[RMDB]
RNA sequence: GGGAACGACUCGAGUAGAGUCGAAAACUUGGAUGGAUCGCCGUCGGGCUCCGGAUCGUGGUAUCCGGCGACUACCAGGGCGUCGGUCAGGGUGGGCUCGGAACCGCCGUAGCAGGCCGGUGUGGCGGUUGUACAACCGGUUCGCCGGUUGUACAACAAAAGAAACAACAACAACAAC
Reactivity to DMS in 0.01 (KOAc 150mM, MgCl2 10mM, bicine 150mM(pH8.5), 24C), signal-to-noise 3, nucleotides 027 to 126: c060u000u010g010g010a180u010g000g000a040u000c050g030c030c000g050u000c030g020g000g000c060u000c010c020g000g010a040u000c030g030u010g040g010u010a060u000c010c000g010g010c290g000a080c080u000a170c050c040a060g000g000g000c040g000u020c110g000g010u000c040a110g000g020g020u020g010g000g010c080u000c080g000g000a120a070c040c040g010c010c020g010u000a110g000c120a110g000g010c080c040g010g000u000g010u000g010g000c080g010